RNA sequence: GGGAACGACUCGAGUAGAGUCGAAAAAUUGUAUCACCUUUUAUUACUUAUGACUAGUGUGGUUACACCACCGUAGUGUGCUUUAUAUUAUAGUUUAUGAAGGGCAGGGAGAACCAUUACAAUGCCGCCUCCCCUCCUUUUUCGAAAGGAGGGGAGGAAAAGAAACAACAACAACAAC
Reactivity to 2A3 in 0.01 (KOAc 150mM, MgCl2 10mM, bicine 150mM(pH8.5), 24C), signal-to-noise 2, nucleotides 027 to 126: a000u100u100g000u000a050u070c050a150c010c000u040u060u000u090a130u020u040a100c080u120u100a020u210g070a020c000u030a130g090u000g000u000g300g000u040u030a020c060a070c020c000a000c050c050g090u000a040g000u040g020u090g060c000u040u160u160a070u090a000u150u230a050u070a100g100u140u000u090a190u050g060a060a000g020g000g000c100a200g090g030g010a110g130a050a040c000c000a020u000u000a030c080a000a000u030g090c050c000g000
Reactivity to DMS in 0.01 (KOAc 150mM, MgCl2 10mM, bicine 150mM(pH8.5), 24C), signal-to-noise 1, nucleotides 027 to 126: a060u000u000g030u000a030u060c120a150c060c010u000u000u000u000a000u080u000a000c080u000u000a060u000g060a000c010u000a230g000u040g060u000g000g020u000u070a100c090a300c050c000a050c080c090g000u010a000g020u020g000u000g030c150u060u000u010a060u000a030u000u000a080u060a030g000u000u020u010a090u020g000a040a000g000g010g050c060a070g040g010g000a110g000a010a210c000c050a130u000u010a000c030a000a070u010g020c000c120g010

Structure probing data (2A3 and DMS) for a 177-nucleotide construct.
Source: RMDB library OK1LIB, as collected in RNAgym.